[RMDB]
RNA sequence: GGGAACGACUCGAGUAGAGUCGAAAAUGUCUGUGUUGUUCGCAACACAGACAAAAAUGCUCCUGAUGUCCCUCACCCACCCCUGAAGAUCCCAGGUGGGCGAGGGAACAGUCAGCGGGAUCACAGUAAAACAGGAACAACCUUCGGGUUGUUCCUGGUUUAGAUAUAGUUUCGACUAUAUCUAAACAAAAGAAACAACAACAACAAC
Reactivity to 2A3 in 0.01 (KOAc 150mM, MgCl2 10mM, bicine 150mM(pH8.5), 24C), signal-to-noise 4, nucleotides 027 to 156: u070g000u000c000u000g000u000g000u010u000g010u030u080c190g010c100a000a000c000a000c000a010g000a000c010a000a000a000a000a000u060g010c000u000c000c010u010g010a010u040g030u020c000c010c000u000c000a020c000c000c000a000c010c010c010c020u090g090a120a030g060a190u130c040c060c030a010g000g010u000g000g000g000c010g000a000g000g000g020a000a000c000a010g080u030c010a010g010c190g040g010g020a040u160c080a040c030a130g130u210a040a080a070a050c010a000g020g000a020a000c000a000a010c010c010u080u140c240g070g000g000u000u000g000u000u000c010c000u000g000
Reactivity to DMS in 0.01 (KOAc 150mM, MgCl2 10mM, bicine 150mM(pH8.5), 24C), signal-to-noise 2, nucleotides 027 to 156: u000g000u010c000u010g010u000g000u000u010g020u000u020c250g060c000a030a020c010a030c010a010g000a010c000a000a010a020a100a070u010g020c010u000c000c010u000g010a050u010g000u000c000c000c010u010c000a000c000c000c000a000c020c000c010c040u020g020a140a190g020a170u000c080c040c020a080g070g100u000g000g010g030c010g000a010g010g000g010a000a010c020a090g010u000c020a020g000c130g010g000g000a120u010c070a130c090a200g010u010a070a100a110a300c000a000g000g000a020a020c000a020a020c020c000u000u010c300g070g020g020u010u000g020u000u000c010c000u010g000
Structure probing data (2A3 and DMS) for a 207-nucleotide construct.
Conditions: 150 mM KOAc, 10 mM MgCl2 and 150 mM bicine (pH 8.5), 24 C.
2A3 adducts were read by reverse transcription with SuperScript II with manganese.
DMS (dimethyl sulfate) methylates the pairing face of unpaired adenines and cytosines.
It was measured as part of the RMDB library PSEUDOB.